Structure probing data (DMS) for a 177-nucleotide construct. It was measured as part of the RMDB library OK2TST. The RNA was probed in 150 mM KOAc, 10 mM MgCl2 and 150 mM bicine (pH 8.5) at 24 C.
[RMDB]
RNA sequence: GGGAACGACUCGAGUAGAGUCGAAAAGGCCAGGCAACUUCAGUUGCCCAAGUUGUGGCCCAGGUGUUGAGGCAGGCUCAGGAUGAUGUGGCGGUGGAGGCAUGGGCAGACAAGAAUGCCGAGCCCAUGCGAAGUGAGCAUUCGUGCUCACUUCGCAAAAAGAAACAACAACAACAAC
Reactivity to DMS in 0.01 (KOAc 150mM, MgCl2 10mM, bicine 150mM(pH8.5), 24C), signal-to-noise 1, nucleotides 027 to 126: g000g010c000c070a220g020g030c010a010a010c010u000u010c170a220g020u010u020g000c000c000c090a060a080g000u000u010g020u000g060g040c020c000c050a100g020g000u020g010u000u020g000a150g010g080c120a070g000g000c080u010c040a040g010g010a080u000g010a100u010g060u000g010g020c060g010g000u000g000g000a190g000g010c060a050u000g000g010g020c030a130g000a000c010a050a160g020a130a180u030g030c000c030g030a180g000c000c010c020a130